Structure probing data (DMS and 2A3) for a 177-nucleotide construct. The data come from the RNA Mapping Database (RMDB), library TTRDES. For 2A3 the reverse transcriptase was SuperScript II with manganese. For DMS the reverse transcriptase was MarathonRT. For 2A3, 5,933 sequencing reads were counted. Conditions: 150 mM KOAc, 10 mM MgCl2 and 150 mM bicine (pH 8.5), 24 C.

RNA sequence: GGGAACGACUCGAGUAGAGUCGAAAAGAUAUGGAGUCACGAGGUCUUGGACCCAUUAAUCGGAAACGAUUACUGUGGCUAGACCCGUGACUCCUAAGUCAAAGGUUGUGGCUUCGGCCACAACCAACAGUGUUAAAAGCUUCGGCUUUUAACACUGAAAAGAAACAACAACAACAAC
Reactivity to DMS in 0.01 (KOAc 150mM, MgCl2 10mM, bicine 150mM(pH8.5), 24C), signal-to-noise 3, nucleotides 027 to 126: g010a010u000a170u010g000g000a000g010u000c000a010c000g010a170g040g000u000c010u000u010g020g000a160c130c020c010a000u000u000a010a010u000c000g010g000a040a050a080c000g000a010u000u000a010c250u010g010u010g030g010c010u000a100g020a020c000c000c000g010u000g010a000c000u000c000c000u000a000a060g010u000c000a140a180a120g010g020u000u000g020u010g010g010c010u010u010c300g020g010c000c000a000c000a000a000c010c000a050a060
Reactivity to 2A3 in 0.01 (KOAc 150mM, MgCl2 10mM, bicine 150mM(pH8.5), 24C), signal-to-noise 3, nucleotides 027 to 126: g020a010u010a030u090g000g000a000g000u000c010a000c030g160a300g060g060u030c120u300u300g300g190a300c000c010c000a000u000u000a010a000u010c000g000g000a020a010a000c010g000a020u020u010a010c030u050g140u300g050g040c080u180a250g010a000c000c000c000g000u000g000a000c000u010c000c000u000a010a000g000u000c010a050a030a090g020g010u010u010g000u000g010g000c010u080u190c300g100g000c000c010a000c000a000a000c000c000a000a000